[RMDB]
RNA sequence: GGGAACGACUCGAGUAGAGUCGAAAAGGCAGCAGCGACGGCGCAGCGUGGGACGGCCAGGCGCGACGGGAGGGAAGCAACCGGUUGCAGUCCGGCCUCCUGUACCUGGCUGGCCCGGGCUGGGGCUAUGAUUGGAGCUGUUCGCAGCUCCAAUCAUAAAAGAAACAACAACAACAAC
Reactivity to DMS in 0.01 (KOAc 150mM, MgCl2 10mM, bicine 150mM(pH8.5), 24C), signal-to-noise 2, nucleotides 027 to 126: g020g010c040a020g010c050a060g000c070g030a100c120g010g020c020g000c030a020g020c010g000u000g000g040g000a020c020g000g000c000c000a000g010g060c300g000c120g000a050c000g020g000g010a000g020g010g000a130a070g000c280a180a300c000c010g000g010u020u050g010c230a160g000u060c000c000g000g000c010c000u000c000c000u010g000u000a010c000c000u010g000g000c030u000g000g000c030c000c040g040g000g000c010u020g000g000g000g000c030u020
Reactivity to 2A3 in 0.01 (KOAc 150mM, MgCl2 10mM, bicine 150mM(pH8.5), 24C), signal-to-noise 2, nucleotides 027 to 126: g070g000c020a010g000c000a010g020c030g090a050c060g040g030c030g000c010a000g000c230g300u040g000g020g000a020c000g000g000c010c000a010g000g010c080g020c120g140a030c010g000g000g000a020g010g050g020a050a060g080c050a090a110c000c000g000g030u060u290g070c060a040g070u050c000c000g010g050c000c000u000c010c000u000g000u000a000c000c000u010g000g000c000u000g000g010c010c000c000g000g000g000c000u000g020g020g020g000c020u040